Structure probing data (DMS and 2A3) for a 177-nucleotide construct. DMS adducts were read by reverse transcription with MarathonRT. For DMS, 2,175 sequencing reads were counted. It was measured as part of the RMDB library RFMREP. 2A3 adducts were read by reverse transcription with SuperScript II with manganese.
RNA sequence: GGGAACGACUCGAGUAGAGUCGAAAACCGCAAGCUACGACUGAAAGUGGGGUCACGAUUGCAUCGAAUUGUGCAAAGUCAAAAUUUGCGGCUAGUUACGAUAAACUGCGAUGCUUCGGCAUCGCAGCAGGACGUAUUACUUCGGUAAUACGUCCUGAAAAGAAACAACAACAACAAC
Reactivity to DMS in 0.01 (KOAc 150mM, MgCl2 10mM, bicine 150mM(pH8.5), 24C), signal-to-noise 3, nucleotides 027 to 126: c010c000g020c030a010a020g010c080u000a160c270g010a020c020u000g000a090a080a150g020u000g000g010g010g020u000c030a020c030g030a130u000u010g000c060a070u000c170g030a080a070u000u010g010u020g000c060a030a060a040g000u010c050a030a180a110a090u000u000u000g010c010g000g000c030u010a090g010u000u010a050c150g010a090u010a080a060a180c000u000g000c000g000a030u000g010c010u000u010c130g030g000c010a000u000c000g020c000a000g000
Reactivity to 2A3 in 0.01 (KOAc 150mM, MgCl2 10mM, bicine 150mM(pH8.5), 24C), signal-to-noise 3, nucleotides 027 to 126: c000c000g000c010a010a000g010c010u060a020c040g030a020c030u080g100a110a100a100g150u140g040g120g040g060u160c020a000c050g060a100u040u110g030c060a080u140c140g190a200a090u090u120g020u000g000c030a040a080a060g030u000c020a000a000a050a060u010u020u020g000c010g010g030c010u020a050g100u100u100a050c080g000a110u130a120a170a050c000u020g000c000g010a000u000g000c000u030u030c130g070g000c010a020u000c010g000c000a000g020
Conditions: 150 mM KOAc, 10 mM MgCl2 and 150 mM bicine (pH 8.5), 24 C. For 2A3, 2,341 sequencing reads were counted.